The record gives the reactivity of an RNA of 177 nucleotides to 2A3 and DMS.
The reactions ran in a buffer of 150 mM KOAc, 10 mM MgCl2 and 150 mM bicine (pH 8.5), at 24 C.
RNA sequence: GGGAACGACUCGAGUAGAGUCGAAAAGAUAUGGAAGAUCGUUGUGCUCGAAGAACUUCAUCGGAAACGAUGAAGGGAGAGCCAACGAGUCUUCCUAAGUCAAAAGCAGAAGCUUCGGCUUCUGCAACCUUUUCUAGAUCUUCGGAUCUAGAAAAGGAAAAGAAACAACAACAACAAC
Reactivity to 2A3 in 0.01 (KOAc 150mM, MgCl2 10mM, bicine 150mM(pH8.5), 24C), signal-to-noise 1, nucleotides 027 to 126: g020a020u120a050u170g010g000a020a000g020a020u010c000g000u000u000g130u280g010c020u000c040g220a300a070g010a030a000c020u000u000c000a020u000c000g020g040a050a040a020c000g000a020u010g020a000a000g000g000g010a050g000a000g000c000c010a000a000c000g000a000g010u000c000u000u000c010c000u000a140a010g020u020c060a010a070a150a150g010c000a020g000a000a000g000c000u100u280c300g130g000c000u020u000c100u000g000c000a010a000
Reactivity to DMS in 0.01 (KOAc 150mM, MgCl2 10mM, bicine 150mM(pH8.5), 24C), signal-to-noise 2, nucleotides 027 to 126: g000a050u000a300u010g000g030a000a010g020a170u000c010g050u020u000g020u030g020c010u010c000g010a240a190g000a170a180c000u000u000c000a010u000c000g000g000a150a050a230c000g000a000u000g010a010a030g010g000g000a040g010a000g020c000c000a000a000c000g000a030g020u000c000u000u000c000c010u010a030a080g000u010c030a080a070a120a130g000c010a010g010a010a010g000c000u010u000c210g020g020c000u000u000c000u010g020c000a020a040